[RMDB]
About this RNA: Structure probing data (2A3 and DMS) for a 177-nucleotide construct. The reactions ran in a buffer of 150 mM KOAc, 10 mM MgCl2 and 150 mM bicine (pH 8.5), at 24 C. 2A3 adducts were read by reverse transcription with SuperScript II with manganese. DMS adducts were read by reverse transcription with MarathonRT. Values are in units of 0.01, from 0 to 300, in steps of 10.
RNA sequence: GGGAACGACUCGAGUAGAGUCGAAAAGGCGGGAAGGGUCGCGGGGUCGGUUUCCAAAUCCUCGAGGCGGUCAGCCCCGUUUCUUCAUCCGAGUCUGCCGACGCGACGGGGAUUAUCACGGGACCCGAUAUCGACUAGAAUUCGUUCUAGUCGAUAUAAAAGAAACAACAACAACAAC
Reactivity to 2A3 in 0.01 (KOAc 150mM, MgCl2 10mM, bicine 150mM(pH8.5), 24C), signal-to-noise 3, nucleotides 027 to 126: g030g010c050g020g030g040a070a030g080g050g010u080c040g010c040g060g020g010g020u060c030g040g040u050u050u010c030c000a050a060a020u020c010c010u040c030g010a050g040g020c010g010g050u100c030a020g010c010c020c000c000g010u020u060u040c050u100u090c040a090u010c020c010g010a020g020u000c020u070g030c010c010g040a070c010g010c040g130a090c000g010g010g030g000a010u050u070a120u160c080a040c080g030g030g020a020c010c000c000g000
Reactivity to DMS in 0.01 (KOAc 150mM, MgCl2 10mM, bicine 150mM(pH8.5), 24C), signal-to-noise 7, nucleotides 027 to 126: g010g000c070g010g010g000a130a090g010g000g020u010c070g030c060g010g010g010g010u000c080g010g010u000u010u010c020c020a080a080a070u000c030c010u000c030g000a170g010g010c040g000g010u000c060a070g010c050c020c010c040g010u000u000u000c070u010u010c130a100u000c080c020g000a090g010u000c030u000g020c050c030g010a090c070g000c050g000a150c030g000g000g000g000a050u000u000a070u000c120a100c110g000g000g000a090c030c010c020g010